[RMDB]
RNA sequence: GGGAACGACUCGAGUAGAGUCGAAAAAAGGGCAGGAGAAGCCGGAUAGUCUCUGCUGUGCUGUUGAAGGGCUCUCUUGUUGCUUCUCCUUUGAGAGGAACUCCAGGCAGAACCUGAGAACUGACAGGCAAUAUCAUUGAUUCGUCAAUGAUAUUGCAAAAGAAACAACAACAACAAC
Reactivity to DMS in 0.01 (KOAc 150mM, MgCl2 10mM, bicine 150mM(pH8.5), 24C), signal-to-noise 7, nucleotides 027 to 126: a090a070g010g000g030c130a030g020g010a020g000a030a020g030c020c030g000g010a020u000a030g010u000c010u010c040u010g020c070u010g020u010g020c120u010g010u010u010g020a160a080g010g000g000c020u000c040u000c010u000u010g050u010u010g020c000u000u000c010u000c000c020u000u010u010g000a070g010a150g010g000a040a080c040u010c040c040a030g000g010c060a120g010a040a300c040c010u000g010a100g010a060a090c040u000g000a120c180a100g010
Reactivity to 2A3 in 0.01 (KOAc 150mM, MgCl2 10mM, bicine 150mM(pH8.5), 24C), signal-to-noise 5, nucleotides 027 to 126: a000a000g050g020g000c040a010g020g010a010g010a030a000g010c010c000g000g000a030u030a020g030u020c050u010c030u260g060c050u090g080u140g150c100u110g060u220u090g070a070a040g030g000g000c000u000c010u000c000u040u180g100u070u060g020c010u010u010c000u010c010c000u060u090u060g100a120g000a010g020g030a030a020c010u010c040c010a010g030g000c040a020g030a150a040c000c000u060g030a050g010a110a030c040u040g030a030c030a050g130